[RMDB]
RNA sequence: GGGAACGACUCGAGUAGAGUCGAAAAGAUAUGGAUUCCCAGUAGACAUGCUAUAUGCUCGGAAACGAGCAGUAUAGCAACAGCUACGGGAAUCCUAAGUCAAAAGACACGGCUUCGGCCGUGUCAACCUAAGUUUGGAGUUCGCUCCAAACUUAGGAAAAGAAACAACAACAACAAC
Reactivity to DMS in 0.01 (KOAc 150mM, MgCl2 10mM, bicine 150mM(pH8.5), 24C), signal-to-noise 2, nucleotides 027 to 126: g000a010u000a070u010g010g000a010u000u000c010c000c000a140g080u010a000g010a020c100a140u020g010c000u000a010u000a020u000g000c000u020c010g030g010a020a010a030c000g030a010g000c000a010g040u000a000u000a010g000c000a060a060c280a140g000c000u000a000c010g000g000g000a010a000u000c010c000u000a010a030g010u000c000a090a130a110a170g010a020c010a000c010g050g010c000u000u000c270g030g010c000c000g030u000g000u000c000a030a090
Reactivity to 2A3 in 0.01 (KOAc 150mM, MgCl2 10mM, bicine 150mM(pH8.5), 24C), signal-to-noise 2, nucleotides 027 to 126: g000a000u030a010u050g000g010a020u000u010c020c000c080a010g000u000a000g010a040c150a220u300g000c010u020a000u000a000u040g000c000u010c000g010g020a010a030a000c000g010a020g040c010a010g000u030a000u010a000g060c010a030a020c090a020g000c000u030a000c000g020g000g000a000a010u000c000c000u000a020a010g010u000c020a020a040a070a180g000a010c000a000c030g030g000c010u100u190c300g130g010c000c000g010u000g000u010c000a000a000